[RMDB]
RNA sequence: GGGAACGACUCGAGUAGAGUCGAAAAUGUGGGGAAUCCUCAGUCUGGGACAGAAGACAGACAAAUGAACAGAUAAGCAUAUGCGAGAUACUCUAUAAUAAGUGAGGUGAGCAAAAGGUUCGGAGCAUCGUUAUACAUUUUUCGAAAUGUAUAACGAAAAAGAAACAACAACAACAAC
Reactivity to 2A3 in 0.01 (KOAc 150mM, MgCl2 10mM, bicine 150mM(pH8.5), 24C), signal-to-noise 5, nucleotides 027 to 126: u100g010u050g000g010g000g010a030a080u100c020c000u030c040a020g030u000c020u020g020g020g040a010c030a070g120a130a000g050a060c020a000g020a010c000a020a120a060u120g000a050a020c040a070g080a130u110a150a030g000c030a060u110a050u230g010c010g010a040g010a090u140a170c010u000c020u060a120u050a300a180u160a230a020g110u090g100a020g000g040u050g030a030g000c000a010a030a030a060g060g020u050u050c010g030g000a030g030c010a040
Reactivity to DMS in 0.01 (KOAc 150mM, MgCl2 10mM, bicine 150mM(pH8.5), 24C), signal-to-noise 7, nucleotides 027 to 126: u010g040u010g000g010g010g010a130a090u000c030c030u000c070a100g000u000c020u000g010g000g020a120c120a100g010a100a080g010a090c070a050g020a060c070a060a120a090u010g010a060a080c110a140g000a100u000a090a140g020c130a120u010a150u010g010c040g000a110g010a230u010a070c030u000c010u000a120u000a110a120u010a090a130g000u010g000a060g000g000u000g000a180g020c040a020a040a090a080g010g010u000u000c050g010g010a100g010c150a100
Chemical mapping of a 177-nucleotide RNA with 2A3 and DMS. For DMS the reverse transcriptase was MarathonRT. Conditions: 150 mM KOAc, 10 mM MgCl2 and 150 mM bicine (pH 8.5), 24 C. For DMS, 6,367 sequencing reads were counted. Source: RMDB library OK2TST, as collected in RNAgym. For 2A3 the reverse transcriptase was SuperScript II with manganese.